[RMDB]
RNA sequence: GGGAACGACUCGAGUAGAGUCGAAAAUGCCAGAAGGCGCACUGGCCGGAGCACAAGCUGCGCUGCAAGGCUGCAGCUGCCAGAACGGAGCAGUUCCUCAAGAAGCUGCAAGCCACACAUGGACCUGCAGUCCAAUUGAUUUCGAUCAAUUGGACUGAAAAGAAACAACAACAACAAC
Reactivity to DMS in 0.01 (KOAc 150mM, MgCl2 10mM, bicine 150mM(pH8.5), 24C), signal-to-noise 7, nucleotides 027 to 126: u010g000c010c010a060g010a140a160g010g000c030g020c070a090c030u000g000g010c020c100g000g000a090g010c060a110c140a090a050g010c120u000g000c020g020c010u000g010c230a120a120g010g020c000u010g030c000a010g010c010u000g010c070c100a120g000a050a090c120g000g000a100g020c160a110g000u010u000c020c040u000c150a120a110g000a180a040g000c010u000g010c000a060a090g020c010c010a060c150a070c130a110u000g010g000a090c040c020u010g010
Reactivity to 2A3 in 0.01 (KOAc 150mM, MgCl2 10mM, bicine 150mM(pH8.5), 24C), signal-to-noise 4, nucleotides 027 to 126: u100g020c000c000a020g040a150a110g050g000c030g000c030a010c040u020g040g000c020c050g150g050a060g020c060a040c020a150a020g020c070u030g000c020g000c010u020g010c060a070a130g030g010c020u050g020c000a000g010c000u030g030c030c020a020g020a080a010c040g020g030a040g010c040a040g080u150u020c010c010u070c050a060a070g070a020a020g040c020u010g000c040a050a040g010c000c010a040c000a010c000a090u060g000g020a040c010c010u040g020
The record gives the reactivity of an RNA of 177 nucleotides to DMS and 2A3. The RNA was probed in 150 mM KOAc, 10 mM MgCl2 and 150 mM bicine (pH 8.5) at 24 C. For 2A3, 7,353 sequencing reads were counted. The DMS profile rests on 8,165 reads. 2A3 adducts were read by reverse transcription with SuperScript II with manganese. Values cover nucleotides 27 to 126.